[RMDB]
About this RNA
Structure probing data (DMS and 2A3) for a 177-nucleotide construct. 2A3 adducts were read by reverse transcription with SuperScript II with manganese. Conditions: 150 mM KOAc, 10 mM MgCl2 and 150 mM bicine (pH 8.5), 24 C. The 2A3 profile rests on 19,401 reads.
RNA sequence: GGGAACGACUCGAGUAGAGUCGAAAAAGCUGGAGCAGAUGCGCAAGGAGGAGCUGGACGCCGAGCAAGCAGAAGCACACCGCGCCCAGGCUCAUCGGGAGUCUGAAGAUCGGUCUUCGCAUCUGGCAGGAUAUUAUUCAUUCGUGAAUAAUAUCCUAAAAGAAACAACAACAACAAC
Reactivity to DMS in 0.01 (KOAc 150mM, MgCl2 10mM, bicine 150mM(pH8.5), 24C), signal-to-noise 9, nucleotides 027 to 126: a100g000c060u010g010g010a160g020c020a030g010a030u000g010c020g020c220a070a060g010g010a110g020g010a080g020c020u000g010g010a180c100g000c020c040g000a120g010c170a100a090g010c050a080g010a180a090g010c080a090c140a110c060c060g010c070g000c060c030c010a030g000g010c010u000c020a130u010c160g010g010g000a060g010u000c020u000g000a060a080g000a080u000c050g010g000u010c020u000u000c020g000c020a030u000c010u000g010g010c200
Reactivity to 2A3 in 0.01 (KOAc 150mM, MgCl2 10mM, bicine 150mM(pH8.5), 24C), signal-to-noise 7, nucleotides 027 to 126: a000g110c100u110g050g020a060g050c010a000g000a050u030g010c030g030c080a030a020g050g040a060g010g030a050g030c010u040g030g060a020c040g010c030c030g030a040g060c060a070a020g000c010a020g030a170a000g030c030a020c010a010c050c020g020c010g000c010c010c000a020g040g020c010u000c010a090u200c150g170g190g000a040g010u020c010u040g070a060a020g040a080u110c040g010g040u020c000u030u020c020g000c000a000u020c010u010g040g020c010